[RMDB]
The record gives the reactivity of an RNA of 177 nucleotides to DMS.
The reactions ran in a buffer of 150 mM KOAc, 10 mM MgCl2 and 150 mM bicine (pH 8.5), at 24 C.
For DMS, 534 sequencing reads were counted.
Reactivities are given for positions 27 through 126.

RNA sequence: GGGAACGACUCGAGUAGAGUCGAAAAGAUAUGGACUGGGAGCUCAACAGCGUAGGUCGGAAACGACUACGACAUGAGCGAACAGUCCUAAGUCAAAGUUUGGUAGUUCUUCGGAACUACCAAACAAGUUCAAACCCCAGUUCGCUGGGGUUUGAACAAAAGAAACAACAACAACAAC
Reactivity to DMS in 0.01 (KOAc 150mM, MgCl2 10mM, bicine 150mM(pH8.5), 24C), signal-to-noise 1, nucleotides 027 to 126: g000a070u010a300u000g000g030a000c000u070g000g000g000a300g020c000u000c000a000a060c230a130g020c000g000u000a020g030g000u010c000g020g000a060a180a150c000g000a000c000u000a000c010g010a040c090a180u000g000a000g010c000g000a300a300c000a010g000u010c000c020u000a000a040g010u000c010a140a130a100g000u010u000u000g010g000u000a000g000u010u000c000u010u000c130g020g000a000a000c000u000a000c000c000a020a000a010c000a000a090